[RMDB]
RNA sequence: GGGAACGACUCGAGUAGAGUCGAAAACUAACGUAAGAAGUCAGUGUGGCGUUUUCACGAGCGGAAAUUGUCACUGUUCCAAAAAACAAUUGCUAGUCUCCUGUGAGCUAAUGAUCACCUGAUGGUUUCAAUCUCUAUACUUCGGUAUAGAGAUUGAAAAAGAAACAACAACAACAAC
Reactivity to 2A3 in 0.01 (KOAc 150mM, MgCl2 10mM, bicine 150mM(pH8.5), 24C), signal-to-noise 9, nucleotides 027 to 126: c010u050a070a030c050g200u110a050a080g090a130a030g090u020c010a010g010u010g000u010g280g010c010g010u010u000u010u020c010a020c030g020a010g010c020g020g030a020a020a020u020u030g010u030c040a020c090u030g050u100u200c010c040a070a060a010a010a010a000c020a010a010u030u030g010c020u050a120g050u090c010u020c030c110u090g010u010g010a010g010c050u100a030a020u080g120a210u030c000a010c010c010u010g000a010u060g050g040u000u000
Reactivity to DMS in 0.01 (KOAc 150mM, MgCl2 10mM, bicine 150mM(pH8.5), 24C), signal-to-noise 3, nucleotides 027 to 126: c040u000a090a110c210g010u050a100a080g010a110a160g000u000c020a010g000u040g010u000g000g030c070g000u000u000u040u000c010a030c020g000a030g000c040g010g000a030a000a020u000u000g010u010c070a050c120u010g010u010u020c080c130a000a060a090a100a070a030c020a010a010u000u000g000c050u000a060g000u020c010u000c030c270u040g020u000g000a030g000c300u010a010a010u000g020a070u000c010a010c000c020u000g010a000u010g010g010u000u040

The record gives the reactivity of an RNA of 177 nucleotides to 2A3 and DMS. DMS (dimethyl sulfate) methylates the pairing face of unpaired adenines and cytosines.